[RMDB]
RNA sequence: GGGAACGACUCGAGUAGAGUCGAAAAGCCGUGUGCUCGACCUCCGCGGACAGCUGUGGCGUCAGGUGCGUGAAAUCACAGUGGAUCUGGGCAGCGACGUCCGCCUGGCUCGUAAAUUGGAGAUCCGCAUUCUCCAAGUCUUCGGACUUGGAGAAUGAAAAGAAACAACAACAACAAC
Reactivity to DMS in 0.01 (KOAc 150mM, MgCl2 10mM, bicine 150mM(pH8.5), 24C), signal-to-noise 3, nucleotides 027 to 126: g000c030c040g030u000g030u010g010c070u000c040g010a090c070c010u000c060c150g040c060g020g010a050c040a190g000c030u000g020u000g000g010c280g010u000c020a050g020g020u000g010c080g000u010g020a070a080a090u010c050a020c050a090g010u000g020g030a090u010c070u000g010g010g000c020a030g000c010g010a160c150g010u010c000c000g020c050c070u000g000g010c070u000c040g010u020a030a090a100u000u000g010g000a110g000a050u020c030c120g010
Reactivity to 2A3 in 0.01 (KOAc 150mM, MgCl2 10mM, bicine 150mM(pH8.5), 24C), signal-to-noise 2, nucleotides 027 to 126: g030c010c010g130u080g010u060g060c020u030c050g050a050c010c020u020c030c030g030c010g020g020a020c020a010g010c010u030g000u050g090g080c030g110u040c000a040g000g120u080g050c070g010u010g060a120a120a040u160c020a040c020a070g100u080g150g070a050u000c020u080g050g080g000c000a020g040c020g060a110c090g040u010c010c000g000c030c000u030g050g000c030u010c020g060u090a060a120a080u110u130g030g010a050g030a050u020c000c040g020
An RNA of 177 nucleotides, treated with DMS and 2A3 and read out base by base.
2A3 adducts were read by reverse transcription with SuperScript II with manganese.
It was measured as part of the RMDB library OK2TST.
The DMS profile rests on 2,569 reads.
For DMS the reverse transcriptase was MarathonRT.
For 2A3, 2,305 sequencing reads were counted.
Conditions: 150 mM KOAc, 10 mM MgCl2 and 150 mM bicine (pH 8.5), 24 C.